This 177-nucleotide RNA was probed chemically with 2A3 and DMS. The RNA was probed in 150 mM KOAc, 10 mM MgCl2 and 150 mM bicine (pH 8.5) at 24 C. For 2A3 the reverse transcriptase was SuperScript II with manganese. It was measured as part of the RMDB library OK2TST. Values cover nucleotides 27 to 126. For DMS the reverse transcriptase was MarathonRT.
[RMDB]
RNA sequence: GGGAACGACUCGAGUAGAGUCGAAAAUGCGGGACGAUCCUUUAGGCAGGCUUAUCGUGAGUUCUUAGCUGCAUCCGCGAACAGGGAAGCUCCAGGAAAGCAUCAUGAUCGGUUGCUACGGAGCGCAUGACUGACUACCAUUCGUGGUAGUCAGUCAAAAAGAAACAACAACAACAAC
Reactivity to 2A3 in 0.01 (KOAc 150mM, MgCl2 10mM, bicine 150mM(pH8.5), 24C), signal-to-noise 1, nucleotides 027 to 126: u110g000c010g000g030g050a070c010g040a050u040c010c030u060u140u100a050g040g000c060a020g100g010c020u000u110a020u130c120g130u070g190a060g060u100u070c010u090u050a080g000c010u000g000c020a050u010c020c010g050c030g020a040a010c030a040g080g020g000a020a100g010c000u000c000c000a070g040g250a100a220a010g000c030a000u000c000a030u080g070a060u070c010g030g030u000u010g010c010u030a080c090g000g020a000g010c010g000c020a010
Reactivity to DMS in 0.01 (KOAc 150mM, MgCl2 10mM, bicine 150mM(pH8.5), 24C), signal-to-noise 2, nucleotides 027 to 126: u020g000c040g000g010g020a260c060g000a030u000c000c060u000u000u030a140g010g030c030a060g020g010c110u000u000a060u030c090g010u020g010a140g010u000u000c110u000u010a080g030c020u000g020c030a110u000c030c000g040c030g010a100a050c130a070g010g010g010a160a100g010c000u000c030c000a150g000g020a060a080a070g010c020a000u000c030a090u000g020a060u000c070g010g000u000u000g000c010u000a130c100g000g000a020g010c010g020c200a060